[RMDB]
RNA sequence: GGGAACGACUCGAGUAGAGUCGAAAACGAAGCGAGCAAGCAAGCGAUCCUGUCGGUAUACCGACAGAGAAAAUAAUCGUAAUAAAAUAGAUGGACACUCACCAUCACCGCCAUUACGAUUAGGCGGUCUUCUGUGAAAAUUCGUUUUCACAGAAGAAAAAGAAACAACAACAACAAC
Reactivity to DMS in 0.01 (KOAc 150mM, MgCl2 10mM, bicine 150mM(pH8.5), 24C), signal-to-noise 6, nucleotides 027 to 126: c070g000a130a110g010c050g020a090g020c080a110a080g000c090a080a100g000c070g020a100u000c050c010u000g000u000c000g000g000u000a150u000a120c010c000g010a020c000a000g010a090g000a060a060a080a080u010a050a020u000c000g010u000a030a090u000a050a060a050a090u010a090g000a010u000g000g010a110c100a060c160u000c190a110c000c000a010u010c020a110c070c050g010c080c050a080u000u000a030c040g020a030u000u000a060g000g020c020g000g000
Reactivity to 2A3 in 0.01 (KOAc 150mM, MgCl2 10mM, bicine 150mM(pH8.5), 24C), signal-to-noise 6, nucleotides 027 to 126: c030g010a040a010g050c020g040a030g070c050a120a000g030c030a090a020g040c040g020a020u000c000c010u010g000u000c000g000g040u140a120u100a300c000c010g010a010c010a010g020a010g010a010a110a010a020u090a020a020u000c000g010u040a110a070u070a190a240a030a040u150a060g010a010u000g000g020a030c050a020c180u070c010a050c030c010a000u030c020a010c020c010g010c010c010a050u050u100a030c010g040a040u040u050a040g000g010c000g020g020
The record gives the reactivity of an RNA of 177 nucleotides to DMS and 2A3.
2A3 adducts were read by reverse transcription with SuperScript II with manganese.
DMS adducts were read by reverse transcription with MarathonRT.
Reactivities are given for positions 27 through 126.
The RNA was probed in 150 mM KOAc, 10 mM MgCl2 and 150 mM bicine (pH 8.5) at 24 C.